[RMDB]
RNA sequence: GGGAACGACUCGAGUAGAGUCGAAAACACAAGUAUCAGUAGGCUCUUAUGGACCAUUCAAUGAUAAACCAAUAGAGAUUCAAUUCUUAAAUGAAGCUAACAGAAAGGAAAACGUACAGAAAACUGCGUUAUCGCAAUGCGUUGCGAGAACGGCUAACAUUCUUACUGGCUUCGGCCAGUAAGAAUGAAAAGAAACAACAACAACAAC
Reactivity to 2A3 in 0.01 (KOAc 150mM, MgCl2 10mM, bicine 150mM(pH8.5), 24C), signal-to-noise 4, nucleotides 027 to 156: c110a010c010a060a040g100u090a080u170c040a030g080u130a030g100g000c010u000c000u070u060a070u140g070g020a050c020c030a040u110u090c060a080a080u090g040a060u100a090a070a070c010c000a010a050u070a070g050a000g030a030u160u070c050a060a160u100u020c020u050u170a100a080a070u130g040a030a030g030c010u020a020a080c030a050g050a090a080a010g040g040a010a130a020a020c030g060u110a050c030a040g110a100a090a030a020c080u080g000c010g010u010u020a020u000c010g000c000a000a020u100g060c130g160u030u010g010c000g010a010g000a010a000c030g080g000c000u030a040a000
Reactivity to DMS in 0.01 (KOAc 150mM, MgCl2 10mM, bicine 150mM(pH8.5), 24C), signal-to-noise 2, nucleotides 027 to 156: c060a090c120a070a150g000u010a030u000c030a050g040u000a090g010g030c040u020c040u000u000a120u000g060g020a150c050c010a130u010u010c060a010a080u010g000a040u000a030a040a120c010c010a010a110u000a100g020a130g020a120u000u000c070a090a060u000u000c060u000u010a050a080a110u000g010a080a060g040c300u000a030a110c040a040g020a010a050a080g010g010a100a030a010a040c140g060u000a200c030a080g000a030a060a050a160c100u000g070c000g010u010u000a080u000c010g050c010a030a030u000g000c160g040u010u000g020c010g000a090g040a030a080c060g020g040c030u010a060a300

The record gives the reactivity of an RNA of 207 nucleotides to 2A3 and DMS. The 2A3 profile rests on 2,129 reads. For 2A3 the reverse transcriptase was SuperScript II with manganese. It was measured as part of the RMDB library OK3TST. Reactivities are given for positions 27 through 156.